Structure probing data (2A3 and DMS) for a 177-nucleotide construct. Source: RMDB libraries RFM100 and RFMREP, as collected in RNAgym.
RNA sequence: GGGAACGACUCGAGUAGAGUCGAAAAGCCGGCUGGAGUAACGACCAGUUGUCACCCGAGUGGGGGCCAAGCGGAUGGAGGAACAUACGGCCCUUCGGUCGUGAUCGCUCCCGUCGAUAGCGUGUCCUCUGCAGUGGGAAUUCGUUCCCACUGCAGAAAAAGAAACAACAACAACAAC
Reactivity to 2A3 in 0.01 (KOAc 150mM, MgCl2 10mM, bicine 150mM(pH8.5), 24C), signal-to-noise 4, nucleotides 027 to 126: g020c020c020g000g000c010u020g010g000a000g020u030a010a030c020g040a020c020c010a010g020u020u020g030u050c030a050c030c010c020g030a080g060u300g010g000g010g000g000c000c020a090a000g100c040g020g040a060u100g050g050a060g010g070a080a030c030a050u170a080c080g020g000c000c000c000u040u000c110g010g000u010c000g010u010g060a080u090c060g010c010u000c000c000c000g020u000c000g020a080u110a060g000c040g020u090g030u020c000c010
Reactivity to DMS in 0.01 (KOAc 150mM, MgCl2 10mM, bicine 150mM(pH8.5), 24C), signal-to-noise 2, nucleotides 027 to 126: g000c070c010g040g000c000u010g010g000a060g020u000a070a050c140g000a090c000c000a050g000u000u000g010u020c100a050c030c040c030g020a060g030u010g080g000g000g010g000c030c030a170a130g000c070g000g050a160u010g010g000a080g000g010a110a080c030a100u050a060c110g010g020c020c000c080u000u000c040g020g010u020c020g010u000g020a100u020c200g000c030u000c010c010c040g000u000c010g000a150u030a090g010c010g010u000g000u010c020c030